[RMDB]
RNA sequence: GGGAACGACUCGAGUAGAGUCGAAAAGAAGAAUGGACCUAUACACUCAUAUCAACAGGAGCUAAAUUUUUGAAUGUGAUUAGGGAUCUGACACGCCCACGUCUUGGUAGUCAUCAAAUAGAGACCGAUAUUAGCACAUCUUCGCAGUCGCCUACCAUAUAGCGACUUGAUUCGUCAAGUCGCUAUAAAAAGAAACAACAACAACAAC
Reactivity to DMS in 0.01 (KOAc 150mM, MgCl2 10mM, bicine 150mM(pH8.5), 24C), signal-to-noise 1, nucleotides 027 to 156: g010a120a020g000a110a060u000g020g010a060c020c000u030a130u000a110c070a060c000u000c040a060u000a140u000c050a100a110c060a070g030g000a040g020c020u000a060a120a110u000u000u000u130u000g000a030a050u000g020u000g060a090u000u010a100g000g000g010a090u000c000u000g000a160c050a070c130g030c040c000c040a130c180g030u030c060u000u000g010g000u010a000g010u000c050a080u000c050a100a090a010u030a090g000a090g040a130c020c000g030a110u020a050u000u000a120g010c010a020c030a170u000c040u000u000c040g040c100a020g020u000c020g000c030c020u000a150c020c030a190
Reactivity to 2A3 in 0.01 (KOAc 150mM, MgCl2 10mM, bicine 150mM(pH8.5), 24C), signal-to-noise 2, nucleotides 027 to 156: g060a050a000g030a010a050u050g010g010a020c020c020u010a000u080a090c010a010c020u090c090a030u060a050u140c040a040a100c000a060g020g070a030g020c040u200a050a080a210u170u150u050u110u090g090a100a050u120g000u020g050a120u040u070a040g020g000g010a010u070c040u020g030a010c000a010c060g080c000c000c020a020c040g050u010c020u030u060g020g000u080a070g010u000c040a030u020c020a050a100a080u110a050g080a000g020a030c010c000g010a020u020a070u050u100a040g020c080a020c000a080u010c030u020u080c050g020c070a000g010u050c000g010c000c010u040a030c000c000a000